Conditions: 150 mM KOAc, 10 mM MgCl2 and 150 mM bicine (pH 8.5), 24 C. This 177-nucleotide RNA was probed chemically with 2A3 and DMS. DMS adducts were read by reverse transcription with MarathonRT. Reactivities are given for positions 27 through 126.
RNA sequence: GGGAACGACUCGAGUAGAGUCGAAAACUAUUUAUAGACAGAACAGUGGAAAACGUAUAUCGCUAUAAACCUUAAACCCCGAUUCUUCCAGUCGUACUAUUCCACAUAGGCGAGGCAUAAGCGAAAGCACGAUCGUAGCUUUCGAGCUACGAUCGUGAAAAGAAACAACAACAACAAC
Reactivity to 2A3 in 0.01 (KOAc 150mM, MgCl2 10mM, bicine 150mM(pH8.5), 24C), signal-to-noise 2, nucleotides 027 to 126: c020u010a020u010u080u010a230u030a030g000a010c070a080g090a170a000c000a000g010u080g110g030a080a300a070a000c030g000u020a060u000a000u300c010g030c060u010a010u100a050a060a060c020c030u030u150a060a010a000c000c000c000c000g030a040u040u010c000u030u000c030c000a110g000u000c010g020u010a030c100u090a100u030u020c010c030a030c010a020u040a010g100g030c010g030a000g040g030c030a100u090a030a060g040c010g060a180a000a000g020
Reactivity to DMS in 0.01 (KOAc 150mM, MgCl2 10mM, bicine 150mM(pH8.5), 24C), signal-to-noise 1, nucleotides 027 to 126: c060u000a010u040u000u020a120u000a070g000a080c110a200g000a080a050c030a050g020u000g010g010a000a020a090a080c300g040u000a110u020a090u040c130g000c030u010a000u060a000a070a000c120c040u000u020a000a130a080c010c000c000c020g000a040u020u000c030u000u000c000c030a110g000u000c020g000u000a050c080u000a080u040u040c040c060a000c110a050u030a020g000g020c050g070a000g010g010c050a040u110a000a150g000c050g000a050a070a120g050